[RMDB]
RNA sequence: GGGAACGACUCGAGUAGAGUCGAAAAUGAACACCUUCUUGACGUCAGCGAAGAGCGCCAAUGUCAGUUCCGGAUAAUGAGGCGAACGCAUGUCUUCCAUCGGCAGGUUCAUCGCCUGGCGAACCUGUUCCGGAACGUUGGUGGGGCCGGGAAUAAAUCGCAUGAUAACAUUCGUGUUAUCAUGCGAAAAAGAAACAACAACAACAAC
Reactivity to 2A3 in 0.01 (KOAc 150mM, MgCl2 10mM, bicine 150mM(pH8.5), 24C), signal-to-noise 3, nucleotides 027 to 156: u100g020a010a040c010a040c020c050u040u040c060u030u080g050a020c040g010u090c040a030g020c040g010a090a020g050a070g100c000g030c020c010a110a040u090g050u140c040a030g000u010u010c010c000g000g000a040u040a110a200u250g060a020g000g000c050g030a100a030c090g060c140a060u150g000u000c000u140u060c060c040a030u060c050g010g000c010a000g000g030u010u060c030a040u080c070g040c020c020u030g050g020c000g020a020a010c030c000u030g080u070u000c010c020g000g000a000a000c000g020u020u030g010g010u020g000g000g020g040c040c020g000g010g080a010a060u110a040a090a040
Reactivity to DMS in 0.01 (KOAc 150mM, MgCl2 10mM, bicine 150mM(pH8.5), 24C), signal-to-noise 2, nucleotides 027 to 156: u020g000a050a140c010a130c040c020u010u000c030u000u010g000a090c030g000u010c020a040g020c030g000a120a180g010a180g030c050g000c030c020a030a080u000g000u010c050a170g040u000u000c000c000g040g060a080u000a100a100u010g000a100g020g020c040g000a060a150c120g000c090a120u000g000u010c040u000u010c050c040a140u000c030g040g000c010a080g010g020u000u000c110a110u000c040g020c030c040u000g030g000c020g020a010a040c010c040u000g000u010u000c010c000g000g010a070a040c070g020u000u000g020g020u020g000g000g020g020c060c040g020g000g040a100a070u010a020a080a110
Description: This 207-nucleotide RNA was probed chemically with 2A3 and DMS. It was measured as part of the RMDB library OK3TST. For DMS the reverse transcriptase was MarathonRT. For 2A3, 1,519 sequencing reads were counted. The DMS profile rests on 3,236 reads. The reactions ran in a buffer of 150 mM KOAc, 10 mM MgCl2 and 150 mM bicine (pH 8.5), at 24 C.